Description: The record gives the reactivity of an RNA of 207 nucleotides to DMS and 2A3. Source: RMDB library M2RFOK, as collected in RNAgym.

RNA sequence: GGGAACGACUCGAGUAGAGUCGAAAAGCGGGGCUUGAAACGCGGGUAGCGCGCACGUCCGGCGAAGAAGUUCGCAUACGCGGUGUGCUGGUGCCGAAGUGUCUGCUGCAACGGCACGCUCGACACCUAGAACAUACCGUAUUCGUACGGUAUGUAAUGAAAUCUAGCGAUUCGUCGCUAGAUUUCAAAAAGAAACAACAACAACAAC
Reactivity to DMS in 0.01 (KOAc 150mM, MgCl2 10mM, bicine 150mM(pH8.5), 24C), signal-to-noise 2, nucleotides 027 to 156: g000c030g000g040g030g040c020u020u000g010a120a150a030c020g020c030g000g040g050u000a110g000c050g000c030g000c000a100c070g000u060c000c060g040g000c020g000a090a190g000a110a170g000u000u050c010g040c010a200u000a110c060g010c080g010g050u000g000u000g000c000u000g020g050u000g000c000c010g000a030a130g020u010g000u010c050u000g020c050u010g020c240a120a210c070g010g040c010a020c020g020c070u010c020g060a070c040a020c010c020u010a120g000a140a060c000a020u000a000c020c020g000u000a020u000u010c220g010u000a000c030g020g020u000a010u010g010u010a030a110
Reactivity to 2A3 in 0.01 (KOAc 150mM, MgCl2 10mM, bicine 150mM(pH8.5), 24C), signal-to-noise 2, nucleotides 027 to 156: g010c020g010g000g020g010c050u050u060g080a100a150a030c070g000c050g040g060g000u070a060g060c020g000c000g000c040a010c020g040u000c010c000g050g010c040g010a030a000g040a070a030g070u050u080c030g000c040a020u060a180c070g000c060g070g000u020g010u020g010c060u070g000g030u010g000c010c000g020a060a020g020u020g020u080c080u060g090c020u050g000c060a050a040c020g020g010c010a000c010g000c040u030c030g010a010c000a020c000c020u080a040g050a080a000c000a000u000a000c000c020g000u010a010u030u110c160g040u010a000c000g030g000u010a000u010g010u080a010a070
For DMS, 3,679 sequencing reads were counted. Reactivities are given for positions 27 through 156. The RNA was probed in 150 mM KOAc, 10 mM MgCl2 and 150 mM bicine (pH 8.5) at 24 C.